[RMDB]
RNA sequence: GGGAACGACUCGAGUAGAGUCGAAAAUGGUGCCCGUUCGCGGGCACCACCUCGUGGUUAGGGCCACGUUAAAUAGUUGCUUAUGCCCUAAGCGUUGAUAAAGAUGCGCGAAAUUCGUUUCGCGCAAGGUGUAUAGCAGUUUCGACUGCUAUACACCAAAAGAAACAACAACAACAAC
Reactivity to 2A3 in 0.01 (KOAc 150mM, MgCl2 10mM, bicine 150mM(pH8.5), 24C), signal-to-noise 1, nucleotides 027 to 126: u110g060g020u000g000c020c060c000g020u060u060c290g000c020g030g000g000c000a000c000c000a010c000c000u000c000g010u000g000g000u010u010a020g010g030g000c000c000a000c000g000u000u020a020a020a000u120a010g060u080u150g060c020u150u090a040u100g040c000c000c000u010a020a000g000c010g090u070u180g020a120u140a180a120a040g140a140u080g000c000g000c000g020a000a010a030u090u110c200g040u030u010u000c000g000c000g000c010a000a000
Reactivity to DMS in 0.01 (KOAc 150mM, MgCl2 10mM, bicine 150mM(pH8.5), 24C), signal-to-noise 2, nucleotides 027 to 126: u000g020g030u000g000c000c000c000g040u000u000c210g020c010g040g000g000c000a000c010c010a030c000c000u000c010g030u000g000g000u000u010a020g010g010g010c000c000a000c000g000u000u000a010a030a020u010a020g000u000u020g020c120u010u000a090u010g030c000c000c000u000a030a040g000c090g010u000u010g000a100u010a070a090a130g000a140u000g000c000g010c010g030a000a010a030u010u000c240g020u000u000u000c000g000c010g000c010a000a010